[RMDB]
Source: RMDB library OK3TST, as collected in RNAgym. Chemical mapping of a 207-nucleotide RNA with 2A3 and DMS. Reactivities are given for positions 27 through 156. For 2A3 the reverse transcriptase was SuperScript II with manganese. For DMS, 3,268 sequencing reads were counted. The reactions ran in a buffer of 150 mM KOAc, 10 mM MgCl2 and 150 mM bicine (pH 8.5), at 24 C.
RNA sequence: GGGAACGACUCGAGUAGAGUCGAAAACAACAACGGCAAGGCACGCAUCGUCGGCAGCACGUUGCAGUUCAACGUGCCCGGCGGCACCUCGAUUUCCUACUACAGCGUGCGCGCCUCGAACGGCACCUUUUUGUACGCGCGGCCGCUGACGCCGGGCGCUUUUCCAGUAAUUCGUUACUGGAAAAGCAAAAGAAACAACAACAACAAC
Reactivity to 2A3 in 0.01 (KOAc 150mM, MgCl2 10mM, bicine 150mM(pH8.5), 24C), signal-to-noise 5, nucleotides 027 to 156: c060a010a010c000a040a060c010g010g030c040a030a070g060g040c040a030c220g020c030a130u140c060g020u010c010g040g010c080a050g000c000a020c010g010u010u010g020c100a090g050u230u270c010a000a000c020g010u000g000c000c000c010g000g000c000g000g010c010a030c010c010u040c040g050a110u050u070u110c030c010u040a100c030u110a090c050a010g000c010g050u100g020c020g010c010g000c020c010u050c020g080a100a050c050g060g000c050a100c050c030u110u130u030u130u170g130u130a050c050g000c010g010c000g030g050c030c010g040c060u040g020a030c060g020c000c010g030g050g000c030
Reactivity to DMS in 0.01 (KOAc 150mM, MgCl2 10mM, bicine 150mM(pH8.5), 24C), signal-to-noise 1, nucleotides 027 to 156: c050a060a070c050a090a080c040g000g000c030a090a080g000g080c010a080c090g030c000a140u010c020g000u010c030g010g040c080a140g020c010a060c050g010u000u000g010c050a280g010u000u010c020a020a020c010g030u000g000c000c010c010g000g080c020g010g020c020a040c010c030u000c060g010a170u000u010u010c030c000u010a090c030u010a060c030a080g000c040g000u010g000c000g000c030g070c000c010u000c010g000a100a120c120g010g010c010a040c080c060u000u000u000u000u000g020u000a060c060g000c010g040c040g000g030c000c000g040c050u000g000a050c050g000c030c010g000g000g030c080